[RMDB]
RNA sequence: GGGAACGACUCGAGUAGAGUCGAAAAGAAGAUGUGUUCGCACAUCUUCAAAAGCAACGACUAGGACCGGCGUGACAAAGGACCGAUAGCUAAUCGCGACGAAAACAGGCCUCUUCGGAGGCCUGAACUUCAUACUUAAGUUCGCUUAAGUAUGAAGAAAAGAAACAACAACAACAAC
Reactivity to DMS in 0.01 (KOAc 150mM, MgCl2 10mM, bicine 150mM(pH8.5), 24C), signal-to-noise 7, nucleotides 027 to 126: g000a020a010g000a020u010g010u000g020u000u020c230g020c010a010c000a000u000c000u010u000c000a030a060a090a140g000c080a090a070c050g000a050c040u000a070g010g000a040c060c020g000g000c050g010u010g010a070c120a070a100a080g010g010a100c090c020g000a060u000a060g000c070u000a060a080u000c070g010c040g000a120c130g000a060a040a070a180c010a000g000g000c000c000u000c000u000u010c150g020g000a010g010g010c000c000u000g010a000a050
Reactivity to 2A3 in 0.01 (KOAc 150mM, MgCl2 10mM, bicine 150mM(pH8.5), 24C), signal-to-noise 5, nucleotides 027 to 126: g000a000a000g010a000u010g020u000g010u050u130c200g050c080a000c000a010u000c000u000u000c000a000a000a000a010g030c020a020a070c030g080a030c040u090a060g050g040a040c020c000g020g020c030g050u050g030a050c050a090a150a060g060g010a080c010c020g050a070u080a050g040c050u060a060a050u080c040g000c030g070a050c040g070a050a030a010a090c010a000g000g010c010c000u000c010u050u100c220g120g010a000g000g000c000c000u000g000a000a000
Chemical mapping of a 177-nucleotide RNA with DMS and 2A3. For DMS, 9,823 sequencing reads were counted. It was measured as part of the RMDB library M2PK50.